[RMDB]
RNA sequence: GGGAACGACUCGAGUAGAGUCGAAAAUUCUGUCACCUAGACUGGUGUGCAGUAGCACUAUCAUGGCUGACUACAGCCUCAAUGUCCCAGGCUUAAGUGAUCUUCCCAACCUCCUGAGUGGCUGGGAGUAUUGGAACGUGUUCGCACGUUCCAAUACAAAAGAAACAACAACAACAAC
Reactivity to DMS in 0.01 (KOAc 150mM, MgCl2 10mM, bicine 150mM(pH8.5), 24C), signal-to-noise 4, nucleotides 027 to 126: u000u010c080u010g010u000c010a030c020c020u010a110g000a040c130u000g010g000u010g020u010g000c000a110g020u010a090g010c070a050c040u000a100u010c100a120u000g010g010c080u000g000a170c130u000a100c060a030g030c020c000u000c140a060a090u010g000u000c140c020c010a040g000g010c030u000u010a070a060g020u000g000a060u010c140u000u010c010c010c000a070a110c180c050u000c030c060u000g020a120g020u000g010g020c010u000g010g000g000a080
Reactivity to 2A3 in 0.01 (KOAc 150mM, MgCl2 10mM, bicine 150mM(pH8.5), 24C), signal-to-noise 3, nucleotides 027 to 126: u070u010c020u050g010u020c010a020c030c040u050a090g120a300c130u090g000g020u040g040u090g040c040a050g070u150a030g020c020a020c070u140a090u150c030a070u080g020g000c000u020g060a160c070u200a150c130a010g000c000c020u020c050a080a110u130g030u070c010c010c000a000g020g010c000u090u090a060a040g000u040g060a050u030c080u080u010c010c000c000a010a050c000c020u010c010c040u060g030a110g100u090g090g000c010u020g000g030g030a040